Source: RMDB library M2RFPK, as collected in RNAgym. Structure probing data (2A3 and DMS) for a 207-nucleotide construct. For 2A3 the reverse transcriptase was SuperScript II with manganese. Reactivities are rounded to 0.1 and cut off at 0 and 3. The RNA was probed in 150 mM KOAc, 10 mM MgCl2 and 150 mM bicine (pH 8.5) at 24 C. DMS (dimethyl sulfate) methylates the pairing face of unpaired adenines and cytosines.
RNA sequence: GGGAACGACUCGAGUAGAGUCGAAAAAACUCAGCUAGGGAGAGUAUAACAUUCAUGUUGACGAGACCCAGACGAAACACAGAGGAAAAUUAUUAAUCACUGGAUAGUAUUAGUAAUGACUCUGUGUAAAACUCUUCUACGUUCGCGUAGAAGAGAACAAGACUAGCAGGUUCGCCUGCUAGUCUUGAAAAGAAACAACAACAACAAC
Reactivity to 2A3 in 0.01 (KOAc 150mM, MgCl2 10mM, bicine 150mM(pH8.5), 24C), signal-to-noise 2, nucleotides 027 to 156: a000a000c030u040c010a010g010c040u200a100g020g030g000a020g000a040g090u140a130u080a300a060c060a060u150u270c060a060u300g050u040u010g060a000c030g010a000g020a020c000c010c000a000g010a030c040g030a000a040a000c010a000c000a010g010a010g010g000a120a070a110a000u000u000a000u000u000a010a010u030c070a010c040u050g050g060a120u300a300g000u020a000u000u000a020g010u000a000a000u030g030a010c000u000c000u000g000u000g000u020a000a000a000a000c000u000c000u000u000c010u000a000c000g010u010u080c230g000c000g020u000a000g000a000a000g000a000g000a000a010
Reactivity to DMS in 0.01 (KOAc 150mM, MgCl2 10mM, bicine 150mM(pH8.5), 24C), signal-to-noise 1, nucleotides 027 to 156: a040a070c020u030c020a050g020c020u010a140g040g000g010a080g010a220g030u000a070u000a050a060c040a090u000u000c070a150u010g020u000u000g000a120c010g000a160g010a120c030c000c000a300g000a130c070g010a080a100a120c010a010c070a010g000a030g040g010a070a120a040a010u000u000a000u000u000a000a000u000c110a100c010u000g000g000a160u000a150g040u000a010u000u000a010g020u010a000a010u000g000a220c010u000c000u000g000u040g000u000a000a020a020a050c000u000c000u000u000c000u000a010c000g030u000u000c300g010c020g060u000a010g000a030a000g000a060g020a010a020